An RNA of 177 nucleotides, treated with 2A3 and DMS and read out base by base. 2A3 adducts were read by reverse transcription with SuperScript II with manganese. Reactivities are rounded to 0.1 and cut off at 0 and 3. The DMS profile rests on 2,979 reads.

RNA sequence: GGGAACGACUCGAGUAGAGUCGAAAAGAAGUACUGUUCGCAGUACUUCAAACGGCAACGGCAACGCCAAGCCGAAGCCGAACGGCAAGCCGAAGGCCAAAAAAACCGUUCCCUUCGGGGAACGGAAGACGAAAUAAAAGUUCGCUUUUAUUUCGUCAAAAGAAACAACAACAACAAC
Reactivity to 2A3 in 0.01 (KOAc 150mM, MgCl2 10mM, bicine 150mM(pH8.5), 24C), signal-to-noise 4, nucleotides 027 to 126: g010a000a000g000u000a000c010u010g030u050u110c240g010c110a000g000u000a000c000u000u000c000a000a010a010c010g000g010c010a030a020c010g000g000c040a110a020c120g080c120c020a020a020g000c010c000g000a010a010g010c000c010g020a060a040c080g020g010c030a040a030g080c030c030g090a080a050g100g010c030c040a030a020a000a020a000a020a110c010c000g000u000u000c000c010c050u010u010c180g070g000g000g010a000a000c010g000g000a010a020
Reactivity to DMS in 0.01 (KOAc 150mM, MgCl2 10mM, bicine 150mM(pH8.5), 24C), signal-to-noise 3, nucleotides 027 to 126: g010a010a010g000u000a000c000u000g010u000u020c150g000c010a020g010u000a000c000u010u000c000a020a050a110c020g010g010c010a020a300c010g010g010c020a050a110c180g020c090c220a090a090g000c000c000g000a050a300g000c010c010g020a060a100c120g010g000c020a040a080g000c010c000g000a120a130g010g000c010c050a010a000a050a050a080a060a110c000c000g000u000u000c000c000c000u010u000c200g010g000g010g000a020a010c000g010g000a000a030